[RMDB]
RNA sequence: GGGAACGACUCGAGUAGAGUCGAAAAUUGUGGCUUAAUGAGGAUUGAUUUAGCAGAAGAGUUCUUGAAGACUAUAUUCAUCACCCAAAACUGAAAUACCUUAAAGUCCUGUACUUCGGUACAGGACGGAAGGGAUAACCUUCGGGUUAUCCCUUCCAAAAGAAACAACAACAACAAC
Reactivity to 2A3 in 0.01 (KOAc 150mM, MgCl2 10mM, bicine 150mM(pH8.5), 24C), signal-to-noise 1, nucleotides 027 to 126: u090u020g010u050g040g050c030u050u080a030a000u220g030a020g030g000a100u040u020g040a030u110u090u110a060g070c000a020g050a100a020g030a050g060u100u000c060u080u090g040a010a020g000a000c050u010a020u000a050u300u060c020a010u040c000a150c000c010c000a010a050a000a000c050u030g020a100a110a070u230a130c000c060u080u080a210a070a080g000u000c010c000u030g000u000a000c000u000u020c110g070g020u000a000c000a000g000g000a000c000
Reactivity to DMS in 0.01 (KOAc 150mM, MgCl2 10mM, bicine 150mM(pH8.5), 24C), signal-to-noise 1, nucleotides 027 to 126: u000u000g020u020g020g010c060u010u000a070a120u010g020a070g010g010a070u000u010g020a120u020u010u020a080g010c040a070g000a060a120g010a110g000u010u000c070u000u000g030a150a110g020a130c050u000a010u000a080u010u020c040a050u010c020a100c000c000c050a040a070a070a110c110u030g000a120a050a100u020a110c150c040u010u010a090a070a130g000u000c000c000u000g000u000a010c000u000u000c150g000g000u000a010c000a020g010g000a000c000
Record summary: Source: RMDB library RFMREP, as collected in RNAgym. The record gives the reactivity of an RNA of 177 nucleotides to 2A3 and DMS. For DMS, 626 sequencing reads were counted. For 2A3 the reverse transcriptase was SuperScript II with manganese. For DMS the reverse transcriptase was MarathonRT.